[RMDB]
RNA sequence: GGGAACGACUCGAGUAGAGUCGAAAAGUGCUAAUGUUCGCAUUAGCACAAAAAGAUAUGGAUCCCAUGGUCCAUCAACAGCUAUGAUCGGAAACGAUCAUAGACAUGAUGGCAUGUGGAUCCUAAGUCAAAAAACAGGGUGAUUCGUCACCCUGAACAUUUGACAUGCGUUCGCGCAUGUCAAAUGAAAAGAAACAACAACAACAAC
Reactivity to DMS in 0.01 (KOAc 150mM, MgCl2 10mM, bicine 150mM(pH8.5), 24C), signal-to-noise 1, nucleotides 027 to 156: g000u000g000c000u000a010a000u030g010u000u000c300g030c020a100u000u010a020g000c000a000c010a030a030a070a070a120g000a160u000a300u020g020g010a030u000c000c010c000a020u020g010g030u030c000c010a000u000c000a030a180c240a120g070c000u000a000u010g030a000u000c000g060g000a240a130a240c050g000a030u000c050a000u000a000g020a040c080a300u000g000a040u000g010g050c000a030u000g030u000g040g000a000u000c000c000u000a000a160g000u000c050a000a110a100a160a030a260c040a000g030g040g030u010g000a040u000u000c150g000u000c000a020c000c000c000u000g000a010a110
Reactivity to 2A3 in 0.01 (KOAc 150mM, MgCl2 10mM, bicine 150mM(pH8.5), 24C), signal-to-noise 2, nucleotides 027 to 156: g010u000g000c000u000a000a000u020g030u080u100c300g000c170a000u010u010a000g010c000a000c000a010a070a000a000a000g020a010u030a010u060g000g000a000u000c010c000c000a010u020g070g100u130c000c000a020u040c030a050a160c040a110g080c010u010a000u000g000a000u000c010g070g000a090a020a040c020g000a010u010c000a000u000a000g020a030c000a020u140g010a010u000g010g000c000a010u030g080u260g000g010a000u000c000c000u020a020a000g000u020c040a060a050a010a000a050a080c030a000g000g010g000u010g010a010u000u090c190g010u050c110a000c000c000c060u040g000a000a000